Source information
The record gives the reactivity of an RNA of 207 nucleotides to 2A3 and DMS.

[RMDB]
RNA sequence: GGGAACGACUCGAGUAGAGUCGAAAAGGUGGAUUCCGAACAAACGUCGAAAGCCUGAACUACGCCUACGAUAGCCCGAUGAUGCGGAACUUCAUCCGUUGGGGACGAAUUAGCGACGCCGAUGCUAAGAAGUUUGGCCGUACUGCCGAUCAUCCGGAUAUCAUAUUAUCUUCGGAUAAUAUGAUAUAAAAGAAACAACAACAACAAC
Reactivity to 2A3 in 0.01 (KOAc 150mM, MgCl2 10mM, bicine 150mM(pH8.5), 24C), signal-to-noise 7, nucleotides 027 to 156: g050g000u050g010g040a150u120u040c030c010g010a060a020c060a080a140a020c050g050u040c030g100a120a030a030g020c010c010u060g040a080a030c030u080a030c080g030c020c020u050a040c040g080a100u100a070g040c010c030c020g060a080u100g010a010u100g030c030g020g040a060a070c030u130u080c040a080u020c020c010g060u070u100g030g010g020g020a010c020g030a040a110u080u020a080g030c010g050a030c040g020c020c040g070a050u100g000c020u060a060a040g020a080a020g050u010u080u100g040g000c000c010g010u050a050c030u060g020c010c000g030a070u040c030a030u020c030c020g010g030
Reactivity to DMS in 0.01 (KOAc 150mM, MgCl2 10mM, bicine 150mM(pH8.5), 24C), signal-to-noise 5, nucleotides 027 to 156: g020g030u010g010g010a140u000u000c080c020g000a090a110c030a060a070a080c070g020u010c020g000a110a080a110g010c020c050u000g020a110a120c050u010a070c050g000c020c000u000a100c070g020a130u000a100g010c020c000c020g030a110u010g020a100u000g000c030g000g020a060a140c110u000u000c060a090u000c010c040g030u000u000g010g010g000g020a080c030g010a070a090u000u000a050g020c030g020a110c030g010c030c020g010a120u000g020c030u000a060a210g010a080a090g000u010u000u000g030g020c030c030g010u000a090c060u000g020c020c010g010a070u000c040a110u010c000c020g010g010